[RMDB]
RNA sequence: GGGAACGACUCGAGUAGAGUCGAAAACUAUCGACGUUCGUGCCCUCAAGACGGACGACAAGCGGAUCUUGCCACCAGGAUGCCUCCGCUAGUCGAGCGGACUUGGUCUCUUCCGCCCAAAGCCCUUUUUCUUUCAACUGAGCUUGUUCCAACGCGCCACCGAAUUCUAGUUCGCUAGAAUUCGGUGAAAAGAAACAACAACAACAAC
Reactivity to 2A3 in 0.01 (KOAc 150mM, MgCl2 10mM, bicine 150mM(pH8.5), 24C), signal-to-noise 2, nucleotides 027 to 156: c020u050a100u110c020g030a030c060g070u050u040c030g070u090g050c010c000c030u040c010a010a030g020a020c020g050g110a010c010g010a000c040a050a010g020c000g000g010a030u110c060u090u090g150c100c010a090c030c050a030g040g050a080u100g090c000c020u010c020c020g020c010u020a040g080u100c020g060a010g050c040g040g010a100c020u010u090g050g010u050c010u000c000u120u030c030c040g030c040c030c010a050a030a030g000c000c000c020u000u020u000u060u050c000u030u080u060c040a050a010c050u040g030a010g010c000u070u060g120u170u060c030c010a040a010c080g030c030g090c080